RNA sequence: GGGAACGACUCGAGUAGAGUCGAAAACGCCAGGGGACUUGUCGCACCUGAGCGCGCUGGCGAAUUCCCCGCAGUCACCCGGCCCCCGAGCCCUCGGUUUUGUCCAAACUGGAACACAUGGCUCGGGUAAAACCCAGGUGUUCGCACCUGGGUUUUAAAAAGAAACAACAACAACAAC
Reactivity to DMS in 0.01 (KOAc 150mM, MgCl2 10mM, bicine 150mM(pH8.5), 24C), signal-to-noise 2, nucleotides 027 to 126: c060g000c030c000a000g020g000g010g000a030c140u010u020g010u030c010g090c080a120c130c040u050g030a100g020c090g020c050g000c020u000g000g010c000g050a100a130u010u010c020c050c000c150g020c230a080g020u020c010a070c070c000c020g020g000c130c080c000c000c010g000a000g000c030c000c150u010c120g000g000u020u000u000u010g030u030c030c090a030a250a040c040u000g020g000a090a030c160a080c120a060u030g000g000c030u000c000g000g000g000